[RMDB]
Description
Structure probing data (DMS and 2A3) for a 177-nucleotide construct. For DMS, 7,539 sequencing reads were counted.
RNA sequence: GGGAACGACUCGAGUAGAGUCGAAAACGUCGUGAACUAGCGACAAUGCCGUAGAUCCAUCGUUAUCUAACCGAAACAUCGUGACUAGUCGUAGAAUAGAACCAGGAGUGGACGCUGCCAAACAAAGACGGGGUCUUAGAUUCGUCUAAGGCCCCGUAAAAGAAACAACAACAACAAC
Reactivity to DMS in 0.01 (KOAc 150mM, MgCl2 10mM, bicine 150mM(pH8.5), 24C), signal-to-noise 4, nucleotides 027 to 126: c110g010u000c020g030u000g000a090a080c110u020a140g000c080g000a020c050a080a090u030g020c020c030g000u000a100g000a060u000c070c040a060u000c070g020u010u020a060u010c040u000a050a090c070c030g030a080a080a110c150a090u000c080g010u010g020a060c040u010a050g010u000c040g000u000a080g010a100a080u020a080g010a070a050c060c040a050g010g000a080g030u000g000g000a020c020g010c040u000g000c030c030a050a040a100c150a070a100a070g020
Reactivity to 2A3 in 0.01 (KOAc 150mM, MgCl2 10mM, bicine 150mM(pH8.5), 24C), signal-to-noise 3, nucleotides 027 to 126: c010g000u000c000g000u040g080a110a090c080u040a130g000c000g000a000c000a020a060u090g010c020c000g030u020a020g010a110u050c030c000a020u000c040g080u040u050a060u080c010u020a040a120c030c020g060a060a010a040c040a090u110c070g020u050g020a010c010u010a080g040u030c020g030u050a010g040a080a090u040a020g020a030a020c000c000a050g000g040a040g010u000g020g000a000c050g000c010u050g000c000c000a060a130a120c010a100a170a000g040
The reactions ran in a buffer of 150 mM KOAc, 10 mM MgCl2 and 150 mM bicine (pH 8.5), at 24 C. Values cover nucleotides 27 to 126. 2A3 adducts were read by reverse transcription with SuperScript II with manganese.